[RMDB]
Record summary: This 177-nucleotide RNA was probed chemically with 2A3. The data come from the RNA Mapping Database (RMDB), library OK1LIB. For 2A3 the reverse transcriptase was SuperScript II with manganese. Conditions: 150 mM KOAc, 10 mM MgCl2 and 150 mM bicine (pH 8.5), 24 C. The 2A3 profile rests on 265 reads.

RNA sequence: GGGAACGACUCGAGUAGAGUCGAAAAUUUGUGAUGAAAUGGCUAAAAAGGCCGCAGAUUUACCACAGUUGCGAGACACAUGGAUCCCCGACAUCAUUGCUUAUGCGAAGCGAGUGCUUAGGUCGGACCACCCGGACUCUUUCGAGAGUCCGGGUGGAAAAGAAACAACAACAACAAC
Reactivity to 2A3 in 0.01 (KOAc 150mM, MgCl2 10mM, bicine 150mM(pH8.5), 24C), signal-to-noise 1, nucleotides 027 to 126: u000u020u020g000u060g090a240u060g010a030a100a080u160g060g000c000u060a070a000a000a240a300g030g000c000c000g000c000a100g000a040u000u000u180a070c010c000a010c000a000g000u100u090g130c000g000a000g010a010c000a000c000a190u040g000g000a040u070c000c020c020c000g010a010c030a030u130c000a130u160u210g030c000u040u110a090u300g040c040g150a100a000g000c000g000a010g210u100g040c000u100u100a100g040g040u000c000g000g000a000